An RNA of 207 nucleotides, treated with 2A3 and DMS and read out base by base. For 2A3, 2,274 sequencing reads were counted. For DMS the reverse transcriptase was MarathonRT. 2A3 adducts were read by reverse transcription with SuperScript II with manganese. The data come from the RNA Mapping Database (RMDB), library ARCHII.
[RMDB]
RNA sequence: GGGAACGACUCGAGUAGAGUCGAAAAUCAGUUAAGCCUGUCCGGCGUCACGACGGCCAGGUCGAAAAUUGAGUGAAUCGCCGUAACGGAGCGUGUUCGUCCGCGACGUCACGGUUAAAUCAAACGACAGAACUAAACAUGUAGAACUGGUCGUGGACCCCUUAGUACUCUUCGGAGUACUAAGGGGAAAAGAAACAACAACAACAAC
Reactivity to 2A3 in 0.01 (KOAc 150mM, MgCl2 10mM, bicine 150mM(pH8.5), 24C), signal-to-noise 3, nucleotides 027 to 156: u060c020a010g130u060u060a060a020g020c000c000u010g010u000c000c010g000g010c010g020u020c020a010c020g010a010c000g000g010c000c020a040g020g060u020c020g060a000a000a020a050u190u290g060a020g000u010g000a020a020u040c020g000c000c000g010u000a000a000c000g010g010a010g000c010g010u120g050u140u150c060g050u000c020c010g000c000g000a010c000g000u020c020a000c010g030g000u010u010a010a010a000u140c050a010a000a050c040g030a000c010a040g020a060a000c020u110a090a200a080c120a080u250g050u180a030g020a090a020c010u080g150g040u050c010g000u040g020g020a030
Reactivity to DMS in 0.01 (KOAc 150mM, MgCl2 10mM, bicine 150mM(pH8.5), 24C), signal-to-noise 2, nucleotides 027 to 156: u010c020a050g070u020u000a100a300g030c030c000u020g040u030c000c000g030g000c030g020u020c240a190c000g000a050c020g030g000c000c000a030g050g010u020c030g000a100a050a050a080u000u000g000a070g010u000g030a180a110u000c130g000c010c000g000u010a030a050c030g030g020a300g010c010g020u020g070u010u000c270g050u030c070c000g010c020g020a120c000g000u000c000a050c000g010g040u020u000a010a090a090u010c020a060a100a070c030g010a050c000a020g040a070a300c050u000a010a080a190c080a120u010g000u000a090g010a110a280c030u000g000g000u000c010g000u000g000g000a260